Source: RMDB library TTRDEL, as collected in RNAgym. Chemical mapping of a 177-nucleotide RNA with DMS and 2A3. The RNA was probed in 150 mM KOAc, 10 mM MgCl2 and 150 mM bicine (pH 8.5) at 24 C. 2A3 adducts were read by reverse transcription with SuperScript II with manganese. The 2A3 profile rests on 4,094 reads.

RNA sequence: GGGAACGACUCGAGUAGAGUCGAAAAGAUAUGGAAAGAACUACUUCCGAGGUAGCGUUGAAAUCGGAAACGAUGGAGCUACGUAGGAAGCUUUCCUAAGUCAAAGCCUUUAGUUCGCUAAAGGCAAUCUAGGAUUUAUGUUCGCAUAAAUCCUAGAAAAAGAAACAACAACAACAAC
Reactivity to DMS in 0.01 (KOAc 150mM, MgCl2 10mM, bicine 150mM(pH8.5), 24C), signal-to-noise 6, nucleotides 027 to 126: g000a040u010a300u010g000g000a020a000a020g000a060a060c070u000a300c000u000u000c000c010g000a200g000g010u000a000g010c000g000u000u020g030a080a160a020u000c010g010g010a100a080a140c000g000a010u000g010g000a100g010c000u010a010c000g000u010a300g010g000a010a010g000c010u000u000u000c010c000u000a020a140g010u000c040a050a130a170g010c000c000u010u000u000a010g000u010u010c250g010c000u000a000a010a010g000g000c000a020a020
Reactivity to 2A3 in 0.01 (KOAc 150mM, MgCl2 10mM, bicine 150mM(pH8.5), 24C), signal-to-noise 1, nucleotides 027 to 126: g030a010u090a030u150g000g020a030a000a020g020a110a010c060u180a090c000u300u000c010c020g000a030g120g070u000a000g020c050g160u300u050g010a040a030a000u010c000g020g000a040a020a050c030g000a010u020g030g000a020g000c000u010a000c010g000u000a010g000g000a000a000g000c000u000u000u000c010c000u000a120a000g020u000c060a060a090a100g000c010c000u000u020u020a050g050u040u060c300g000c190u020a000a000a000g000g000c020a000a010